[RMDB]
RNA sequence: GGGAACGACUCGAGUAGAGUCGAAAAUGAUUCUAAGUUCUAGCUGCUUUGGCAAAAUGUUAACUUAGACGACCAGAUGCGACACGUCGCUGGUGUAUCCGGGCGAGUAGCGAGGUGGCAGGACACACGUGAGUGACGUAUUCGUACGUCACUCACGAAAAGAAACAACAACAACAAC
Reactivity to 2A3 in 0.01 (KOAc 150mM, MgCl2 10mM, bicine 150mM(pH8.5), 24C), signal-to-noise 2, nucleotides 027 to 126: u080g010a040u060u010c010u040a110a050g010u000u000c040u090a100g040c030u020g000c050u140u010u190g240g000c040a040a070a050a120u200g030u120u090a040a080c020u030u020a040g030a050c030g010a010c010c000a000g010a160u090g020c000g040a030c020a040c160g080u030c050g010c200u120g010g070u070g050u030a050u000c030c040g020g000g000c000g010a040g050u060a010g020c020g000a040g040g000u040g000g070c010a020g020g020a030c030a010c000a000
Reactivity to DMS in 0.01 (KOAc 150mM, MgCl2 10mM, bicine 150mM(pH8.5), 24C), signal-to-noise 3, nucleotides 027 to 126: u010g000a160u020u000c010u000a030a030g000u000u000c030u000a090g030c130u010g010c100u010u000u010g030g020c030a060a080a080a120u000g010u000u010a050a060c040u000u000a040g010a070c070g000a100c020c000a150g000a120u010g010c020g000a060c070a050c110g010u000c050g030c030u010g010g010u000g020u000a070u010c000c030g000g010g010c030g010a080g020u000a060g010c010g000a100g020g070u000g000g010c040a070g000g000a050c040a080c150a140